RNA sequence: GGGAACGACUCGAGUAGAGUCGAAAAACUUAGAAUGGUUGUCAUGUCCUAACACUCACUGUGCUGUGCCCUCUCCAGAGUUUCCAGUGUUCAUGACCCACACUGUAGAACGGGUAGAGAAGAUCUACCUAAAUCAGGUCUUCGGACCUGAUUUAGGAAAAGAAACAACAACAACAAC
Reactivity to DMS in 0.01 (KOAc 150mM, MgCl2 10mM, bicine 150mM(pH8.5), 24C), signal-to-noise 2, nucleotides 027 to 126: a070c070u010u000a070g010a130a040u000g030g010u000u010g020u000c050a040u000g000u010c010c020u000a030a080c080a060c030u000c100a070c110u000g010u000g000c070u010g020u010g010c060c020c020u010c010u010c020c040a050g000a070g010u000u000u010c020c000a040g000u000g000u010u010c120a050u010g010a060c050c020c040a090c080a050c060u010g000u000a120g010a100a110c090g000g000g020u000a030g000a060g000a100a110g000a090u000c040u010a080
Source information:
This 177-nucleotide RNA was probed chemically with DMS. The data come from the RNA Mapping Database (RMDB), library OK2TST. The reactions ran in a buffer of 150 mM KOAc, 10 mM MgCl2 and 150 mM bicine (pH 8.5), at 24 C. The DMS profile rests on 1,520 reads. For DMS the reverse transcriptase was MarathonRT.